[RMDB]
RNA sequence: GGGAACGACUCGAGUAGAGUCGAAAAUAGGAUACCCAAACCUGAUUGAGAGGACACACGAAUUCUUCGAGAAGAGCUUGAUCUACUAUAAUGGACGUCCAGACUUAAUGCAGGUCUCGGGAAAUACCACGUCACCAACGUUCGCGUUGGUGACGUGAAAAGAAACAACAACAACAAC
Reactivity to DMS in 0.01 (KOAc 150mM, MgCl2 10mM, bicine 150mM(pH8.5), 24C), signal-to-noise 1, nucleotides 027 to 126: u000a090g020g000a190u030a240c010c000c000a020a150a110c010c000u000g040a110u000u000g030a050g120a150g000g010a040c060a090c190a090c190g050a190a110u000u000c050u000u010c060g000a030g030a140a040g000a120g000c050u010u000g030a150u000c050u000a080c170u000a100u000a090a070u000g000g000a070c200g010u010c020c000a050g000a090c000u000u000a040a020u000g010c050a000g030g000u000c070u000c220g050g000g010a090a090a030u010a050c100
Reactivity to 2A3 in 0.01 (KOAc 150mM, MgCl2 10mM, bicine 150mM(pH8.5), 24C), signal-to-noise 1, nucleotides 027 to 126: u120a050g070g040a060u110a140c000c000c000a000a090a000c010c000u010g010a030u030u000g000a010g000a010g040g000a030c010a000c000a000c080g050a070a040u100u000c050u040u030c040g100a110g090a260a040g010a010g000c000u130u090g070a130u010c000u110a070c030u020a040u080a300a120u130g070g030a080c070g040u000c020c020a060g050a140c040u020u060a060a070u140g190c050a000g000g090u000c020u060c080g000g000g000a030a010a030u110a110c020

Annotation
This 177-nucleotide RNA was probed chemically with DMS and 2A3. The data come from the RNA Mapping Database (RMDB), library OK2TST. The RNA was probed in 150 mM KOAc, 10 mM MgCl2 and 150 mM bicine (pH 8.5) at 24 C. For DMS the reverse transcriptase was MarathonRT.